[RMDB]
RNA sequence: GGGAACGACUCGAGUAGAGUCGAAAACUCUGCUAAUUCGUUAGCAGAGGUACACUGGGACGGGUCGGGAGGGGGAUACUCGCGGUCCCAAGAACAAUCCAGCAAGCACAUUAUUCGUAAUGUGCAAGUACAUUGAAAGUUUCGACUUUCAAUGUACAAAAGAAACAACAACAACAAC
Reactivity to DMS in 0.01 (KOAc 150mM, MgCl2 10mM, bicine 150mM(pH8.5), 24C), signal-to-noise 4, nucleotides 027 to 126: c000u000c000u000g000c000u000a010a020u000u020c210g040u000u000a010g000c010a000g000a010g010g000u000a040c140a120c040u010g010g000g000a090c150g000g010g030u010c060g020g000g000a140g000g010g000g000g000a070u000a030c040u000c030g010c030g000g000u000c010c010c010a050a040g010a070a090c170a060a060u010c050c040a070g010c170a090a150g000c000a010c000a000u000u000a040u000u010c170g010u000a000a000u000g010u000g020c010a030a050
Reactivity to 2A3 in 0.01 (KOAc 150mM, MgCl2 10mM, bicine 150mM(pH8.5), 24C), signal-to-noise 7, nucleotides 027 to 126: c000u000c000u000g000c000u000a020a030u070u070c200g070u070u020a000g010c000a000g000a000g000g000u030a030c070a010c030u030g020g030g130a050c040g030g040g190u240c070g030g040g070a260g050g050g000g020g010a020u070a070c010u020c020g040c030g020g010u020c000c000c010a010a000g020a030a030c040a020a050u020c040c010a020g050c070a170a020g000c010a010c000a010u000u020a020u060u090c190g050u030a010a000u000g000u000g000c000a000a000